[RMDB]
RNA sequence: GGGAACGACUCGAGUAGAGUCGAAAAAGGCACUUCGCAAUGUGUGCUCAAACAUUGCUUAUUCAAACACGCUUCACAAUAUGCGACAAAGAAACAUUGUUAUAAGAGCUAAUGUUUUAACAUUGGCAAAACCGAGUUAGCUUCGGCUAACUCGGAACAUUUCCGGUUAGUUCGCUAACCGGAAAUGAAAAGAAACAACAACAACAAC
Reactivity to DMS in 0.01 (KOAc 150mM, MgCl2 10mM, bicine 150mM(pH8.5), 24C), signal-to-noise 2, nucleotides 027 to 156: a080g020g030c030a020c040u000u000c140g000c040a030a030u000g040u000g020u000g000c040u000c070a150a060a070c000a040u000u000g020c050u000u020a090u000u000c080a100a120a110c100a100c070g030c040u000u000c030a130c110a040a100u020a090u000g000c000g020a210c090a100a080a120g000a140a090a070c060a090u010u000g000u000u000a080u000a090a070g000a280g010c030u000a000a000u000g020u000u000u000u000a130a020c010a050u000u000g020g060c000a040a050a050a060c000c000g010a040g000u010u000a000g000c000u000u000c300g040g000c000u000a000a010c010u000c000g000g000a020a050
Reactivity to 2A3 in 0.01 (KOAc 150mM, MgCl2 10mM, bicine 150mM(pH8.5), 24C), signal-to-noise 8, nucleotides 027 to 156: a010g160g000c010a000c000u010u010c010g000c000a000a000u000g000u000g000u010g010c070u060c190a050a060a000c000a010u010u030g010c000u080u110a200u140u130c110a040a120a040c060a020c060g030c020u090u120c080a030c040a160a130u070a050u220g010c020g080a090c110a040a140a020g080a040a090a010c050a070u020u060g030u060u100a130u060a250a100g050a010g030c000u010a000a000u000g030u010u130u060u150a130a020c010a000u000u010g010g000c000a020a050a020a040c000c000g000a000g000u000u000a000g000c010u030u040c260g010g000c000u000a000a000c000u000c010g010g000a000a000
An RNA of 207 nucleotides, treated with DMS and 2A3 and read out base by base. The RNA was probed in 150 mM KOAc, 10 mM MgCl2 and 150 mM bicine (pH 8.5) at 24 C. The DMS profile rests on 3,019 reads. In probing experiments dimethyl sulfate is read out at A N1 and C N3, which are open when not base-paired. Values cover nucleotides 27 to 156. The data come from the RNA Mapping Database (RMDB), library M2RFPK.